[RMDB]
RNA sequence: GGGAACGACUCGAGUAGAGUCGAAAAGGAGGCAAGUUCGCUUGCCUCCAAAGAAGCUCAAAUUGACGCAAACAUCCGGGUCAUCGCGAGCAAGCGAGGAAAAAACCGUGAACUUCGGUUCACGGAAGUCUAAACAUGAGUUCGCUCAUGUUUAGACAAAAGAAACAACAACAACAAC
Reactivity to 2A3 in 0.01 (KOAc 150mM, MgCl2 10mM, bicine 150mM(pH8.5), 24C), signal-to-noise 3, nucleotides 027 to 126: g000g000a000g010g010c010a000a000g000u030u040c070g000c050u000u010g000c000c020u010c010c000a000a000a000g000a020a000g020c000u010c000a080a160a280u170u090g020a030c010g030c300a080a230a170c040a210u050c110c070g080g000g000u010c030a030u030c030g010c000g040a030g060c040a020a010g040c040g020a120g020g030a080a090a030a020a000a050c000c000g000u000g000a000a000c000u020u070c240g060g010u010u010c000a000c020g000g000a000a000
Reactivity to DMS in 0.01 (KOAc 150mM, MgCl2 10mM, bicine 150mM(pH8.5), 24C), signal-to-noise 4, nucleotides 027 to 126: g000g030a020g000g010c010a000a020g010u000u020c190g040c000u000u000g000c010c000u000c010c010a000a020a070g010a110a090g010c000u000c030a050a180a100u000u010g010a020c030g010c060a070a100a110c140a080u010c140c110g000g000g010u000c020a030u010c060g030c280g010a050g010c060a090a100g010c040g000a070g010g010a000a040a060a070a100a080c000c000g000u000g000a000a000c000u000u010c150g020g000u000u000c000a000c010g000g020a010a020